[RMDB]
RNA sequence: GGGAACGACUCGAGUAGAGUCGAAAAGAUUCCUCGUUCUUGAGCGAGGUUUAAACAAAUCGACCACACAAACGUAGAGCCGACUACGGAUUUAUAAAUUAAGGCAUUAAGUGUGAUAAGGAGACAAAAAACGAUGUUGUGUUCGCACAACAUCGAAGUAUGAGACUGUGUUCGCACAGUCUCAUACAAAAGAAACAACAACAACAAC
Reactivity to 2A3 in 0.01 (KOAc 150mM, MgCl2 10mM, bicine 150mM(pH8.5), 24C), signal-to-noise 2, nucleotides 027 to 156: g070a110u050u110c000c010u000c000g000u060u050c030u130u200g070a030g000c010g000a000g010g000u030u070u050a020a030a010c050a000a040a000u060c030g020a020c000c050a010c010a020c030a020a120a010c000g000u000a000g000a020g020c010c000g070a040c000u000a000c000g000g020a020u040u300u030a170u080a060a030a010u120u100a000a000g000g020c000a000u090u150a080a070g000u000g000u000g030a050u040a180a030g170g010a050g030a060c190a030a120a000a060a000a020c020g000a010u000g000u000u000g000u000g010u040u030c100g060c060a000c000a000a000c000a000u000c000g000a010a010
Reactivity to DMS in 0.01 (KOAc 150mM, MgCl2 10mM, bicine 150mM(pH8.5), 24C), signal-to-noise 1, nucleotides 027 to 156: g020a090u000u000c010c000u000c020g010u000u000c070u070u020g010a070g010c010g010a040g010g010u000u000u020a010a060a170c080a060a070a150u000c050g010a150c010c020a080c020a130c050a220a130a130c010g000u010a040g000a110g030c000c020g090a110c010u000a100c010g000g000a200u000u000u000a020u000a040a010a100u000u010a040a080g010g020c040a280u000u000a010a130g010u000g000u010g000a050u010a100a130g060g000a200g000a090c030a000a040a020a030a070a130c000g010a000u000g000u000u010g040u010g010u000u000c300g000c020a040c000a000a010c010a010u000c010g020a000a040
Background
Structure probing data (2A3 and DMS) for a 207-nucleotide construct. The reactions ran in a buffer of 150 mM KOAc, 10 mM MgCl2 and 150 mM bicine (pH 8.5), at 24 C. Values cover nucleotides 27 to 156. Source: RMDB library M2RFPK, as collected in RNAgym. The DMS profile rests on 1,888 reads. The 2A3 profile rests on 1,376 reads. For DMS the reverse transcriptase was MarathonRT.